[RMDB]
RNA sequence: GGGAACGACUCGAGUAGAGUCGAAAACUCGAAAGAGACCUGCAUAUCUUAGGCAGAUGAACAAGUCUCGUCUGAAAAGCGAAAGCCCUAAGAUAUGCAGCUGUGAAGACUUGACGCAGAAAAUAAACGAGUCCAUUAGUUUCGACUAAUGGACUCGAAAAGAAACAACAACAACAAC
Reactivity to 2A3 in 0.01 (KOAc 150mM, MgCl2 10mM, bicine 150mM(pH8.5), 24C), signal-to-noise 3, nucleotides 027 to 126: c000u000c000g020a030a060a020g060a000g020a060c000c000u000g000c000a000u000a000u000c010u000u000a000g000g060c010a000g000a000u010g010a010a010c000a000a000g010u000c000u000c030g030u010c040u030g120a230a180a090a000g040c020g050a080a010a000g010c000c000c000u000a000a000g000a000u010a000u000g000c000a010g020c000u010g010u000g040a070a010g000a010c000u010u000g010a010c000g010c000a000g140a040a090a010a040u250a050a120a020
Reactivity to DMS in 0.01 (KOAc 150mM, MgCl2 10mM, bicine 150mM(pH8.5), 24C), signal-to-noise 1, nucleotides 027 to 126: c000u000c000g000a160a200a110g000a000g060a070c300c020u010g000c010a000u000a000u000c000u000u000a000g000g010c060a020g000a000u000g010a090a130c040a060a020g000u000c000u000c000g000u000c030u060g000a250a040a090a270g000c000g000a120a000a240g000c000c000c000u000a000a000g000a050u010a000u000g000c040a000g000c030u000g000u000g070a100a110g050a000c000u000u000g000a300c000g000c010a020g000a200a130a120a210u030a010a070a220